Source: RMDB library OK2TRN, as collected in RNAgym. This 177-nucleotide RNA was probed chemically with DMS. In probing experiments dimethyl sulfate is read out at A N1 and C N3, which are open when not base-paired. Reactivities are given for positions 27 through 126. DMS adducts were read by reverse transcription with MarathonRT.

[RMDB]
RNA sequence: GGGAACGACUCGAGUAGAGUCGAAAAGACCUUAGAAAACCGAUUUACGGAAUAACUAAAACGGGUUUAGAGUUCCGAUGCAGUUACUUACUUUCGGGAUAUUCUUUGGCGAAAUUGGGUGAACAACACGCAAGAACGUGUUCGCACGUUCUUGCGUAAAAGAAACAACAACAACAAC
Reactivity to DMS in 0.01 (KOAc 150mM, MgCl2 10mM, bicine 150mM(pH8.5), 24C), signal-to-noise 1, nucleotides 027 to 126: g020a140c010c000u010u010a030g020a000a030a170a170c000c010g010a040u020u000u020a080c180g010g010a060a050u010a080a100c020u000a040a130a110a070c120g000g000g010u000u030u000a140g000a230g020u000u000c000c050g020a090u010g030c300a050g020u000u000a080c030u000u000a040c080u000u000u000c030g000g030g020a080u000a060u000u000c010u010u010u010g010g030c060g030a060a080a040u010u000g000g000g040u000g010a070a080c140a040a030c160